Chemical mapping of a 177-nucleotide RNA with DMS and 2A3. It was measured as part of the RMDB library OK2TRN. Reactivities are given for positions 27 through 126. High 2A3 reactivity points to a flexible backbone, as in loops and unpaired stretches. For DMS, 3,450 sequencing reads were counted.

[RMDB]
RNA sequence: GGGAACGACUCGAGUAGAGUCGAAAAGUUAGAUAGUAUUUGUAUGUCAUAAACAUUACCCACCCUUUGACUGGCAUUACCCAUCAAAAUUUAUCUAAUGCCUAUGUGAAAGAUUCAAUAUAACAAAAAUAUGACUAAUAUUCGUAUUAGUCAUAUUAAAAGAAACAACAACAACAAC
Reactivity to DMS in 0.01 (KOAc 150mM, MgCl2 10mM, bicine 150mM(pH8.5), 24C), signal-to-noise 4, nucleotides 027 to 126: g020u000u010a030g010a030u010a030g020u000a080u000u000u000g000u020a070u000g010u000c020a030u000a040a040a040c130a090u000u010a210c110c070c070a060c100c040c050u000u000u000g010a030c050u000g000g010c070a100u010u000a070c130c040c060a070u010c090a040a040a040a100u000u000u000a030u020c050u010a010a000u000g010c010c010u000a050u010g010u000g000a060a070a070g000a100u000u010c050a010a100u020a090u010a060a080c030a030a050a070
Reactivity to 2A3 in 0.01 (KOAc 150mM, MgCl2 10mM, bicine 150mM(pH8.5), 24C), signal-to-noise 2, nucleotides 027 to 126: g020u000u000a030g010a050u040a030g040u040a140u080u100u110g090u050a070u080g000u000c010a060u100a110a070a050c060a070u080u160a100c020c010c000a030c030c020c000u000u010u010g070a010c000u000g010g050c000a050u010u060a090c020c020c000a040u090c040a170a150a070a130u060u180u100a070u050c020u040a030a020u050g000c000c000u080a180u140g030u010g100a060a020a020g050a020u260u030c040a030a060u150a070u120a270a060c010a010a180a020